[RMDB]
RNA sequence: GGGAACGACUCGAGUAGAGUCGAAAAGAUAUGGACUGGAUGGUGUUCAACAGCUAGACUCGGAAACGAGUCUAGACAUGAACUCAUCACAGUCCUAAGUCAAAAGGAGCUUGUUCGCAAGCUCCAACACUGAGAUAAGGUUCGCCUUAUCUCAGUGAAAAGAAACAACAACAACAAC
Reactivity to DMS in 0.01 (KOAc 150mM, MgCl2 10mM, bicine 150mM(pH8.5), 24C), signal-to-noise 7, nucleotides 027 to 126: g010a060u000a300u000g000g000a010c000u000g000g000a000u000g010g000u010g020u000u000c010a030a100c300a210g010c010u000a000g010a010c000u000c000g010g000a110a090a230c000g000a020g010u010c000u000a000g000a030c100a180u000g010a020a010c000u000c000a000u000c000a110c020a010g000u010c000c000u000a010a100g000u000c070a100a090a130a180g000g000a020g020c000u000u000g020u010u010c230g020c010a000a010g010c000u000c000c010a040a080
Reactivity to 2A3 in 0.01 (KOAc 150mM, MgCl2 10mM, bicine 150mM(pH8.5), 24C), signal-to-noise 6, nucleotides 027 to 126: g010a010u070a050u150g000g000a000c000u000g000g000a000u010g010g210u190g070u180u050c050a120a100c050a190g080c000u010a000g000a010c010u000c010g000g040a040a060a050c010g010a000g000u010c000u000a000g000a000c000a010u050g010a020a000c000u010c010a010u000c010a020c010a070g000u000c000c000u000a000a000g040u020c030a010a010a050a260g000g010a000g000c000u020u020g050u120u150c270g030c200a010a010g000c000u020c000c000a000a000